[RMDB]
RNA sequence: GGGAACGACUCGAGUAGAGUCGAAAACUCCAUGAGUUCGCCGGGUACUCUCUCCAUCAGCGGCGUGACCGCCUCCUUACCUUCGAGAAUAUGGCGAAGAAUACUUUUUUCUGCCUCAUACGACGCACGGGAGGAAUUAUUUCGAUAAUUCCUCCCGAAAAGAAACAACAACAACAAC
Reactivity to 2A3 in 0.01 (KOAc 150mM, MgCl2 10mM, bicine 150mM(pH8.5), 24C), signal-to-noise 1, nucleotides 027 to 126: c030u020c020c010a160u230g040a050g070u010u010c080g030c010c070g060g040g050u050a030c030u030c000u000c000u030c080c020a160u110c050a030g020c000g040g010c000g030u040g030a110c030c030g020c010c000u000c020c000u060u060a070c000c000u090u130c040g070a070g030a100a030u110a100u150g010g000c020g010a020a020g000a000a040u280a240c090u170u040u010u010u010u070c030u090g010c050c000u080c010a070u140a200c060g130a020c000g100c050a050
Reactivity to DMS in 0.01 (KOAc 150mM, MgCl2 10mM, bicine 150mM(pH8.5), 24C), signal-to-noise 2, nucleotides 027 to 126: c080u030c000c060a100u000g000a120g000u000u000c070g000c030c030g000g030g000u000a070c060u000c060u110c030u000c050c030a070u000c070a150g010c060g010g030c010g010u020g020a160c070c010g010c030c050u000c030c010u010u010a100c110c030u030u000c060g000a090g010a170a080u010a060u000g010g000c050g000a010a030g020a070a100u000a120c160u000u000u000u000u000u010c040u020g000c030c040u000c090a080u000a070c050g000a070c200g000c160a130
An RNA of 177 nucleotides, treated with 2A3 and DMS and read out base by base. In probing experiments dimethyl sulfate is read out at A N1 and C N3, which are open when not base-paired. For DMS, 1,079 sequencing reads were counted. As a SHAPE reagent, 2A3 marks flexible, mostly unpaired nucleotides at the ribose 2'-OH. The reactions ran in a buffer of 150 mM KOAc, 10 mM MgCl2 and 150 mM bicine (pH 8.5), at 24 C. For 2A3, 804 sequencing reads were counted.